[RMDB]
An RNA of 177 nucleotides, treated with 2A3 and DMS and read out base by base. For 2A3 the reverse transcriptase was SuperScript II with manganese.
RNA sequence: GGGAACGACUCGAGUAGAGUCGAAAAGAAGAAACAGUACUGUUCACACCUUUCUUCACUGAGAUUCCAGUGUACAUGAGAACAUAUAUUUAUUGCAUGAUUUUCUAGAUACACAGUCUAUGCAUUAGGAUAAUUAUAGUUUCGACUAUAAUUAUCCAAAAGAAACAACAACAACAAC
Reactivity to 2A3 in 0.01 (KOAc 150mM, MgCl2 10mM, bicine 150mM(pH8.5), 24C), signal-to-noise 9, nucleotides 027 to 126: g020a010a000g010a000a020a010c030a020g060u070a040c050u050g030u090u050c020a020c000a020c040c000u000u030u020c010u010u010c010a040c070u100g080a040g030a220u090u030c040c010a050g040u030g030u100a090c080a100u090g020a010g010a040a000c040a010u070a010u030a040u130u280u050a160u130u060g000c010a010u020g140a230u060u040u060u060c040u050a120g030a250u090a100c070a010c020a040g040u000c040u120a060u070g020c010a050u060u160a060
Reactivity to DMS in 0.01 (KOAc 150mM, MgCl2 10mM, bicine 150mM(pH8.5), 24C), signal-to-noise 9, nucleotides 027 to 126: g000a030a030g010a040a020a030c270a060g000u000a060c070u000g000u000u000c070a150c090a090c110c180u000u000u000c010u000u000c020a070c090u000g000a090g000a100u000u000c040c030a100g020u000g010u000a030c090a110u000g000a030g000a010a020c020a040u000a060u010a050u010u010u010a080u040u010g000c040a010u000g000a090u000u000u000u000c050u000a100g010a130u000a040c080a300c080a080g000u000c070u000a050u000g010c110a090u000u000a140
For DMS, 10,669 sequencing reads were counted.
The reactions ran in a buffer of 150 mM KOAc, 10 mM MgCl2 and 150 mM bicine (pH 8.5), at 24 C.